[RMDB]
RNA sequence: GGGAACGACUCGAGUAGAGUCGAAAAGCAAACUAUUAUUCUUUAACGGACACACAAUUUAUGGGUUAUAAGUUAAAGCGAUGACCUUUAGUUGCGUUUACAUUUACCGGAAUUGGCCUAGGGGUGGCCCUCUUAGCAUUUUCGAAUGCUAAGAGGGAAAAGAAACAACAACAACAAC
Reactivity to 2A3 in 0.01 (KOAc 150mM, MgCl2 10mM, bicine 150mM(pH8.5), 24C), signal-to-noise 2, nucleotides 027 to 126: g000c020a050a090a050c050u060a060u270u040a070u150u050c020u040u070u020a020a010c010g050g050a010c010a000c010a000c010a080a080u070u260u130a130u160g000g000g020u090u050a130u030a230a070g030u030u060a090a020a010g030c060g110a060u080g050a040c030c000u020u040u090a010g000u050u040g010c000g010u060u020u050a070c030a100u050u100u090a070c020c030g060g000a090a070u040u050g050g000c030c000u030a030g000g040g070g000u020g050g010
Reactivity to DMS in 0.01 (KOAc 150mM, MgCl2 10mM, bicine 150mM(pH8.5), 24C), signal-to-noise 5, nucleotides 027 to 126: g010c050a060a060a070c040u000a060u010u010a050u000u000c020u000u000u000a020a020c040g010g020a150c300a030c010a030c050a030a120u010u010u020a060u000g000g000g000u000u000a080u010a130a140g000u000u000a020a020a060g010c240g010a030u000g000a080c140c100u000u000u000a020g010u000u000g000c020g010u000u000u000a090c130a060u000u000u010a090c050c030g010g000a090a090u000u000g010g000c020c040u000a060g020g020g020g030u000g020g000
Source information: Structure probing data (2A3 and DMS) for a 177-nucleotide construct. The data come from the RNA Mapping Database (RMDB), library OK2TST. The reactions ran in a buffer of 150 mM KOAc, 10 mM MgCl2 and 150 mM bicine (pH 8.5), at 24 C.